[RMDB]
RNA sequence: GGGAACGACUCGAGUAGAGUCGAAAACUAUGCCAUCUUUGUGGUUAAACAAAUUCAUGGUUAAACAAGGCACCACUGAAACCUGACUGACAUCAUAAGGAUAUCUAAAACCUCUAUAAUUUUAGCGCAUUUGAAAGGGAUUCGUCCCUUUCAAAUGAAAAGAAACAACAACAACAAC
Reactivity to DMS in 0.01 (KOAc 150mM, MgCl2 10mM, bicine 150mM(pH8.5), 24C), signal-to-noise 5, nucleotides 027 to 126: c060u000a090u000g020c040c050a030u000c100u000u000u000g010u010g010g010u000u000a100a120a080c040a010a030a060u010u020c130a030u000g000g010u010u000a100a080a110c120a090a100g010g010c090a040c030c020a040c100u010g000a060a050a060c060c030u000g010a090c100u000g010a070c080a030u000c040a040u010a070a040g010g010a080u010a040u000c050u010a040a030a060a080c060c040u010c100u000a090u020a060a110u000u010u010u000a070g010c300g010
Reactivity to 2A3 in 0.01 (KOAc 150mM, MgCl2 10mM, bicine 150mM(pH8.5), 24C), signal-to-noise 4, nucleotides 027 to 126: c010u030a040u160g040c010c010a020u020c050u070u080u080g040u010g040g090u110u240a090a120a030c030a010a100a030u130u090c020a020u060g050g020u050u110a120a100a040c030a060a040g090g000c050a020c030c000a030c070u050g040a050a030a040c010c020u020g050a080c030u030g020a010c020a050u040c000a020u040a140a020g040g010a030u020a050u120c030u040a050a050a080a100c010c030u110c050u160a130u090a300a280u170u110u070u060a060g080c060g020
Annotation: Chemical mapping of a 177-nucleotide RNA with DMS and 2A3. The RNA was probed in 150 mM KOAc, 10 mM MgCl2 and 150 mM bicine (pH 8.5) at 24 C. For 2A3, 2,938 sequencing reads were counted. For DMS the reverse transcriptase was MarathonRT. Values cover nucleotides 27 to 126. It was measured as part of the RMDB library OK2TRN.